[RMDB]
RNA sequence: GGGAACGACUCGAGUAGAGUCGAAAAGAUAUGGAACAGCUGGAGAUGAUAAAUCGUGACCCUUCGAAGGGUCGGAAACGACCUUUUUGAAGCACGAUUUAUCAUCGUUGAAAGCUGUUCCUAAGUCCAUGUUUUGUAUCUUCGGAUACAAAACAUGAAAAGAAACAACAACAACAAC
Reactivity to 2A3 in 0.01 (KOAc 150mM, MgCl2 10mM, bicine 150mM(pH8.5), 24C), signal-to-noise 1, nucleotides 027 to 126: g010a010u130a040u160g010g000a000a000c000a000g000c010u010g020g050a030g020a030u000g000a010u000a030a000a000u000c010g010u000g110a270c130c010c000u020u000c010g010a010a000g000g000g000u020c030g020g030a080a060a020c010g020a010c010c000u030u120u060u110u300g010a000a000g010c010a000c020g000a000u000u000u000a010u020c000a010u000c000g000u020u000g000a000a000a000g010c000u000g010u000u020c000c000u000a020a000g010u000c040
Reactivity to DMS in 0.01 (KOAc 150mM, MgCl2 10mM, bicine 150mM(pH8.5), 24C), signal-to-noise 4, nucleotides 027 to 126: g000a070u010a300u010g010g010a010a010c000a010g010c010u000g010g000a060g000a010u000g010a010u000a000a010a000u000c000g020u010g000a190c270c300c050u000u000c010g010a000a020g010g000g020u000c010g010g010a070a070a240c010g000a010c010c000u000u000u000u000u010g010a010a020g010c030a010c000g000a010u000u000u000a000u000c000a000u000c000g000u000u020g010a120a160a030g000c000u000g010u010u000c000c000u000a010a100g000u010c050
An RNA of 177 nucleotides, treated with 2A3 and DMS and read out base by base. Values cover nucleotides 27 to 126. For DMS, 5,971 sequencing reads were counted.